[RMDB]
RNA sequence: GGGAACGACUCGAGUAGAGUCGAAAAGAUAUGGAUUCGCCCAUACGAGCGGAUCGGAAACGAUCCGAACUACUCGUGGGAACUACGAAUCCUAAGUCAAACUGAUGAGGCUUCGGCCUCAUCAGAACUCAACGUCUAACUUCGGUUAGACGUUGAGAAAAGAAACAACAACAACAAC
Reactivity to DMS in 0.01 (KOAc 150mM, MgCl2 10mM, bicine 150mM(pH8.5), 24C), signal-to-noise 1, nucleotides 027 to 126: g030a110u000a300u000g010g000a010u000u000c020g000c010c010c020a120u000a030c070g000a040g000c000g020g000a030u000c000g020g000a030a070a200c060g000a020u010c000c000g000a030a040c030u000a300c020u010c020g020u000g010g000g090a160a040c170u050a250c030g000a020a030u000c000c000u000a060a060g020u000c000a140a170a270c000u020g060a020u020g020a010g000g000c020u000u000c210g040g000c000c000u010c030a000u000c000a020g000a060a190
Reactivity to 2A3 in 0.01 (KOAc 150mM, MgCl2 10mM, bicine 150mM(pH8.5), 24C), signal-to-noise 1, nucleotides 027 to 126: g010a020u060a090u120g000g020a000u000u020c010g070c000c000c000a070u200a290c060g000a010g000c000g010g030a000u000c030g010g040a060a070a000c020g000a030u000c000c000g000a030a000c050u270a040c010u040c040g000u010g000g000g040a080a120c160u230a060c300g000a000a000u070c020c020u030a090a000g030u020c070a100a000a200c020u000g000a000u030g000a020g000g030c000u110u150c300g150g010c040c030u000c000a000u000c000a000g010a000a000

Source: RMDB library TTRDES, as collected in RNAgym. Chemical mapping of a 177-nucleotide RNA with DMS and 2A3. The 2A3 profile rests on 1,816 reads. The DMS profile rests on 973 reads. The reactions ran in a buffer of 150 mM KOAc, 10 mM MgCl2 and 150 mM bicine (pH 8.5), at 24 C. 2A3 adducts were read by reverse transcription with SuperScript II with manganese. Values cover nucleotides 27 to 126.